The record gives the reactivity of an RNA of 177 nucleotides to 2A3 and DMS. Reactivities are given for positions 27 through 126. For DMS the reverse transcriptase was MarathonRT. For 2A3 the reverse transcriptase was SuperScript II with manganese.
[RMDB]
RNA sequence: GGGAACGACUCGAGUAGAGUCGAAAAGUGGAUAGUUUCGACUAUCCACACAACUGAUGAUCUUACAGUGGAGGAUGAAGAAGAUGGCCAACGGAUCCUCAAAUAGCACAGAGUUCGCUCUGUGCAACUUAAAUUACGAUUUCGAUCGUAAUUUAAGAAAAGAAACAACAACAACAAC
Reactivity to 2A3 in 0.01 (KOAc 150mM, MgCl2 10mM, bicine 150mM(pH8.5), 24C), signal-to-noise 7, nucleotides 027 to 126: g000u010g000g000a000u010a000g010u020u050u110c170g030a010c000u000a000u000c000c000a000c000a000c000a000a010c020u080g030a070u060g010a040u080c020u050u140a070c040a070g030u100g110g030a010g030g010a030u070g060a040a130g030a040a020g050a090u110g060g030c020c010a050a010c040g050g020a020u010c010c000u010c010a040a080a080u150a010g000c000a000c000a000g010a000g020u050u070c150g050c060u000c000u000g000u000g000c000a000a000
Reactivity to DMS in 0.01 (KOAc 150mM, MgCl2 10mM, bicine 150mM(pH8.5), 24C), signal-to-noise 9, nucleotides 027 to 126: g020u000g000g000a010u000a010g010u000u000u010c170g020a040c000u000a000u000c000c000a010c010a050c160a090a060c040u000g000a080u010g020a180u000c030u000u000a120c060a070g010u000g010g010a040g000g000a040u000g010a100a110g010a080a090g000a060u010g010g000c020c030a060a100c090g000g000a060u000c010c020u000c060a060a070a070u010a090g010c000a010c000a010g010a020g020u000u010c220g010c010u000c000u000g010u000g010c000a020a030